[RMDB]
RNA sequence: GGGAACGACUCGAGUAGAGUCGAAAAGAUAUGGAUAUAGACAUGCUCGAGUAUCGGAAACGAUACGAGAGCAACAGCUAUCAUCCUAAGUCAAACUUGUUUCGCGAGUUCGCUCGCGAAACAAGAAGUUAGAAUGAAUGUUCGCAUUCAUUCUAACAAAAGAAACAACAACAACAAC
Reactivity to DMS in 0.01 (KOAc 150mM, MgCl2 10mM, bicine 150mM(pH8.5), 24C), signal-to-noise 6, nucleotides 027 to 126: g010a050u000a300u000g000g010a010u000a020u000a010g000a080c080a250u000g010c000u000c000g010a300g010u000a000u000c000g010g000a090a060a150c010g000a010u000a000c000g000a260g000a010g010c000a000a010c230a100g000c010u010a000u000c180a010u000c000c000u000a040a150g010u010c040a080a090a200c010u000u000g000u000u000u000c000g010c000g010a020g010u000u010c280g010c000u000c000g000c000g000a000a000a010c000a000a000g010a060a060
Reactivity to 2A3 in 0.01 (KOAc 150mM, MgCl2 10mM, bicine 150mM(pH8.5), 24C), signal-to-noise 3, nucleotides 027 to 126: g030a020u070a040u140g000g010a010u010a000u000a020g070a060c060a100u080g000c010u000c010g000a020g010u000a000u000c000g000g030a100a060a010c000g000a000u000a010c010g000a010g010a000g020c010a010a000c000a000g010c000u020a010u050c060a010u000c020c000u020a110a020g070u040c030a040a080a110c020u020u020g000u010u000u000c010g010c010g000a010g010u080u130c280g050c140u000c000g000c000g000a000a010a000c000a010a000g000a010a010